[RMDB]
RNA sequence: GGGAACGACUCGAGUAGAGUCGAAAAUGAUGCUUGUUCUAUCAAGAUUGAAAGCUCCUUUGCGAGCUGCGGCAGGGAAUUCUGCUGGUUACAGGCAGCAACCUGUGAGUUUAGCUAUUUAUGGUGACCCCGGAGUUGGGAAAACCUUGAUGGUUCAUACGUAUGUCCUAUUCGUAGGACAUACGUAAAAAGAAACAACAACAACAAC
Reactivity to 2A3 in 0.01 (KOAc 150mM, MgCl2 10mM, bicine 150mM(pH8.5), 24C), signal-to-noise 2, nucleotides 027 to 156: u070g100a000u170g010c020u120u070g020u090u030c020u040a060u120c030a120a050g110a170u040u220g110a160a060a000g000c000u020c040c030u140u130u220g060c140g000a010g010c040u050g010c000g020g000c030a010g010g040g120a070a070u200u040c000u040g040c000u000g000g000u070u060a060c060a020g030g020c020a000g040c010a100a140c000c000u020g000u070g060a080g040u010u080u140a010g000c000u000a060u010u090u070a040u190g000g000u010g000a060c000c000c020c040g250g080a120g030u270u200g010g060g000a040a160a000a000c000c020u030u020g020a030u070g000g030u060u060c030a040
Reactivity to DMS in 0.01 (KOAc 150mM, MgCl2 10mM, bicine 150mM(pH8.5), 24C), signal-to-noise 2, nucleotides 027 to 156: u000g020a070u000g020c010u020u010g000u000u000c020u000a060u010c020a050a100g010a080u020u000g010a090a110a070g010c000u000c000c010u000u010u000g030c060g010a030g020c000u000g070c040g060g010c040a040g010g020g040a090a260u000u000c040u020g000c030u000g060g000u000u000a080c110a130g000g020c010a100g020c090a140a140c010c020u000g000u000g000a120g010u000u000u000a110g000c040u000a050u000u000u010a120u020g010g030u000g030a300c050c000c000c040g020g010a190g030u010u000g010g030g010a060a080a040a030c020c010u010u000g010a070u000g010g000u000u000c060a300
Structure probing data (2A3 and DMS) for a 207-nucleotide construct. It was measured as part of the RMDB library OK3TST.